RNA sequence: GGGAACGACUCGAGUAGAGUCGAAAAGAUAUGGAUUGUUCGACUUUUGACGAGAAAUGUUCGGAAACGAACAUUCUCUCGAUAAGUCGACAAUCCUAAGUCAAACUGUCAACCUUCGGGUUGACAGCUGGGGUAACUUGUUCGCAAGUUACCCCAGAAAAGAAACAACAACAACAAC
Reactivity to 2A3 in 0.01 (KOAc 150mM, MgCl2 10mM, bicine 150mM(pH8.5), 24C), signal-to-noise 2, nucleotides 027 to 126: g000a000u020a020u060g010g000a020u010u050g040u230u230c040g010a020c000u160u130u280u300g300a300c160g000a000g030a030a030a040u010g020u010u000c020g020g010a040a030a000c020g030a000a000c010a010u000u000c030u030c000u010c080g020a020u030a180a000g000u000c010g020a010c000a010a010u010c010c000u000a010a000g030u010c050a070a070a150c000u020g000u000c000a000a000c010c000u060u070c300g250g000g000u020u010g000a010c000a010g000
Reactivity to DMS in 0.01 (KOAc 150mM, MgCl2 10mM, bicine 150mM(pH8.5), 24C), signal-to-noise 1, nucleotides 027 to 126: g000a060u000a220u020g000g000a010u000u000g000u010u010c000g010a040c000u000u000u000u020g020a220c230g000a010g000a020a020a010u010g010u000u010c020g060g010a050a070a070c010g020a020a000c000a010u000u000c240u000c000u000c000g000a120u020a010a020g000u000c000g010a020c010a000a000u000c000c000u000a010a060g000u000c020a160a100a300c000u000g020u000c020a000a010c000c000u000u010c280g030g020g020u010u000g020a000c010a000g010
Structure probing data (2A3 and DMS) for a 177-nucleotide construct. Values cover nucleotides 27 to 126. Conditions: 150 mM KOAc, 10 mM MgCl2 and 150 mM bicine (pH 8.5), 24 C.